[RMDB]
Conditions: 150 mM KOAc, 10 mM MgCl2 and 150 mM bicine (pH 8.5), 24 C. Structure probing data (DMS and 2A3) for a 177-nucleotide construct. It was measured as part of the RMDB library OK1LIB.
RNA sequence: GGGAACGACUCGAGUAGAGUCGAAAAGAUAAUAAAACUGAAUCAAAACUGCAAAUGAGAUCAUUUUUAUUUAUUCUUGUCAUUCAGUAAGUAUAAAUUGCUAAAAUAUUUUGAAUACAUAGAACUCAUGUCGUAUUCUUUUCGAAGAAUACGACAUAAAAGAAACAACAACAACAAC
Reactivity to DMS in 0.01 (KOAc 150mM, MgCl2 10mM, bicine 150mM(pH8.5), 24C), signal-to-noise 2, nucleotides 027 to 126: g000a060u010a020a000u030a010a020a020a000c090u000g000a070a080u000c000a010a130a170a160c220u030g030c250a120a100a060u010g000a290g010a000u000c000a000u000u030u000u010u000a000u010u010u030a090u010u000c000u030u000g020u000c210a060u000u000c000a070g000u040a020a060g010u020a040u010a010a060a110u010u000g000c100u030a060a030a070a070u030a020u010u020u020u030g000a000a000u000a020c020a050u050a070g010a030a070c150u010c050
Reactivity to 2A3 in 0.01 (KOAc 150mM, MgCl2 10mM, bicine 150mM(pH8.5), 24C), signal-to-noise 4, nucleotides 027 to 126: g030a020u140a100a000u020a000a030a000a000c010u020g120a050a060u020c010a050a140a140a160c100u210g050c050a010a160a110u200g000a080g010a100u030c000a010u000u000u000u030u030a030u000u070u010a080u060u040c010u030u000g030u080c020a030u020u030c010a020g070u120a120a020g020u020a100u070a220a200a130u220u110g030c020u120a050a050a040a190u150a120u080u180u060u050g000a000a000u040a060c030a010u150a060g030a080a040c000u030c080